[RMDB]
The data come from the RNA Mapping Database (RMDB), library OK1LIB.
This 177-nucleotide RNA was probed chemically with DMS and 2A3.
The RNA was probed in 150 mM KOAc, 10 mM MgCl2 and 150 mM bicine (pH 8.5) at 24 C.
DMS adducts were read by reverse transcription with MarathonRT.
The 2A3 profile rests on 136,920 reads.
RNA sequence: GGGAACGACUCGAGUAGAGUCGAAAAUCACAGUGUCCUGGCGUGAAAACGUCAGGCAAUUAGCAAUCACUGUAUGCUAAUUGCAUUGUGUGAAAACACAAUGAUGCUGUGUAACAGUGAUUGAUACGAACAUGUGGUAUUUCGAUAUCACAUGUUCAAAAGAAACAACAACAACAAC
Reactivity to DMS in 0.01 (KOAc 150mM, MgCl2 10mM, bicine 150mM(pH8.5), 24C), signal-to-noise 9, nucleotides 027 to 126: u020c010a000c000a000g010u000g010u000c000c000u000g010g000c000g000u000g000a130a060a120a010c010g010u000c000a010g000g010c000a000a000u010u000a010g000c000a050a120u010c000a000c000u000g010u000a190u010g000c000u000a000a010u000u000g000c000a050u000u000g000u000g000u000g000a120a060a150a020c000a000c000a000a000u000g000a010u000g000c000u000g000u000g010u010a070a020c000a000g000u000g000a260u040u030g010a110u040a110c220
Reactivity to 2A3 in 0.01 (KOAc 150mM, MgCl2 10mM, bicine 150mM(pH8.5), 24C), signal-to-noise 9, nucleotides 027 to 126: u050c000a000c000a000g010u000g010u010c000c000u000g000g000c000g000u010g050a050a020a010a010c000g000u000c000a000g000g000c000a000a000u000u000a000g000c000a010a030u060c000a000c000u000g000u020a050u040g000c000u000a010a000u000u000g000c000a000u000u000g000u000g000u000g050a030a010a020a000c000a000c000a000a000u000g000a000u000g000c000u000g000u000g000u010a010a000c000a000g010u000g010a040u050u150g050a030u060a060c080